[RMDB]
RNA sequence: GGGAACGACUCGAGUAGAGUCGAAAACGCACGGUGCUUGCCACGCUGCACCGCCGCGCGCCGCUGAUCGUGCAGCAGGCGCUUUACUGGGAUGAGGGAAUGCCGACGCUUCCCUGCGUCAGCAUCAGGCAUACGUGACUUUCGAGUCACGUAUGCCAAAAGAAACAACAACAACAAC
Reactivity to 2A3 in 0.01 (KOAc 150mM, MgCl2 10mM, bicine 150mM(pH8.5), 24C), signal-to-noise 2, nucleotides 027 to 126: c040g030c000a030c070g000g040u020g010c010u000u090g030c040c030a140c110g020c080u010g000c010a000c040c000g050c030c020g040c020g000c020g000c000c000g000c000u010g030a120u140c100g150u250g190c020a000g000c060a140g000g010c000g010c000u060u090u050a030c020u050g020g020g020a030u110g070a100g000g040g060a080a050u010g020c020c000g030a020c020g010c010u060u080c000c010c010u010g000c000g000u000c000a010g000c010a040u110c060a020
Reactivity to DMS in 0.01 (KOAc 150mM, MgCl2 10mM, bicine 150mM(pH8.5), 24C), signal-to-noise 2, nucleotides 027 to 126: c120g030c120a200c060g020g000u010g010c030u010u010g000c090c050a040c210g040c110u000g000c010a050c040c030g030c100c070g000c120g030c010g010c010c010g030c010u000g020a090u030c210g010u030g020c030a020g000c000a100g030g000c000g010c050u000u010u000a110c100u000g000g010g030a120u010g000a070g000g020g000a160a020u000g020c010c000g010a040c010g000c000u010u010c030c040c050u000g000c000g020u000c000a020g000c000a000u000c140a150
This 177-nucleotide RNA was probed chemically with 2A3 and DMS. It was measured as part of the RMDB library OK2TST. Values cover nucleotides 27 to 126. The reactions ran in a buffer of 150 mM KOAc, 10 mM MgCl2 and 150 mM bicine (pH 8.5), at 24 C.